RNA sequence: GGGAACGACUCGAGUAGAGUCGAAAAGAUAUGGAGUGAACUACUCUUGUACUGGCGUUGAAAUCGGAAACGAUGGAGCCAGGUAGAGAGCACUCCUAAGUCAAACAUUCUCCUUCGGGAGAAUGAACAAACUUUAAAGGUUCGCCUUUAAAGUUUGAAAAGAAACAACAACAACAAC
Reactivity to DMS in 0.01 (KOAc 150mM, MgCl2 10mM, bicine 150mM(pH8.5), 24C), signal-to-noise 5, nucleotides 027 to 126: g000a040u010a300u000g000g000a020g010u000g000a060a070c050u010a300c020u010c010u000u000g010u020a280c010u000g000g000c010g000u000u010g010a110a120a030u010c010g010g000a120a070a170c000g000a010u000g010g010a140g000c010c000a010g000g010u000a240g000a020g040a030g010c000a010c000u000c000c010u000a030a100g010u010c030a100a110a280c010a000u000u000c000u000c000c000u000u010c190g010g010g010a010g000a000a000u000g000a120a200
Reactivity to 2A3 in 0.01 (KOAc 150mM, MgCl2 10mM, bicine 150mM(pH8.5), 24C), signal-to-noise 3, nucleotides 027 to 126: g020a010u050a060u190g000g010a010g020u010g020a110a040c070u250a100c000u290c000u020u020g080u210a080c010u010g000g000c010g300u300u060g060a070a080a020u010c010g000g000a030a080a080c010g000a020u000g020g000a010g000c000c000a010g020g010u030a020g010a000g030a000g000c000a000c000u000c010c000u010a080a010g030u010c020a020a130a040c000a010u010u000c010u000c000c020u040u100c200g140g000g010a020g020a010a000u000g000a030a040
Chemical mapping of a 177-nucleotide RNA with DMS and 2A3. The DMS profile rests on 5,555 reads. Conditions: 150 mM KOAc, 10 mM MgCl2 and 150 mM bicine (pH 8.5), 24 C. For DMS the reverse transcriptase was MarathonRT.